Structure probing data (2A3 and DMS) for a 177-nucleotide construct. Conditions: 150 mM KOAc, 10 mM MgCl2 and 150 mM bicine (pH 8.5), 24 C.
[RMDB]
RNA sequence: GGGAACGACUCGAGUAGAGUCGAAAAGAGAAUACUAAGGCGAUCGAGAUAACUGUGGUUAAGGAACUCGGCAAAAUGCCCCCGUAACUUCGGGAGAAGGGGGGCCUCGUCUGGUGACGGAACUUGCGAAGUUGUAGUUAUUCGUAACUACAACUUCAAAAGAAACAACAACAACAAC
Reactivity to 2A3 in 0.01 (KOAc 150mM, MgCl2 10mM, bicine 150mM(pH8.5), 24C), signal-to-noise 9, nucleotides 027 to 126: g070a000g040a070a080u100a100c040u200a140a050g020g000c010g020a020u030c010g010a020g020a060u120a230a050c020u050g040u110g110g250u240u120a070a040g040g010a050a030c010u000c000g020g010c080a050a050a020a040u120g000c010c000c000c000c000g050u080a060a080c010u010u020c040g070g070g020a130g010a020a010g010g010g000g000g000g000c000c000u020c000g010u000c020u030g020g010u030g000a020c050g040g030a050a050c000u010u010g010c020
Reactivity to DMS in 0.01 (KOAc 150mM, MgCl2 10mM, bicine 150mM(pH8.5), 24C), signal-to-noise 8, nucleotides 027 to 126: g010a130g000a130a090u030a030c040u000a080a040g020g010c020g010a040u020c020g000a040g000a080u010a070a200c020u000g010u020g020g020u020u010a110a070g000g000a090a150c010u000c020g000g000c200a060a050a110a080u020g000c010c000c000c000c000g020u020a110a290c010u000u000c020g010g050g000a140g010a010a010g000g010g000g000g000g000c000c070u000c020g010u000c010u000g000g010u000g010a110c130g010g010a090a100c030u000u000g000c300

DMS adducts were read by reverse transcription with MarathonRT.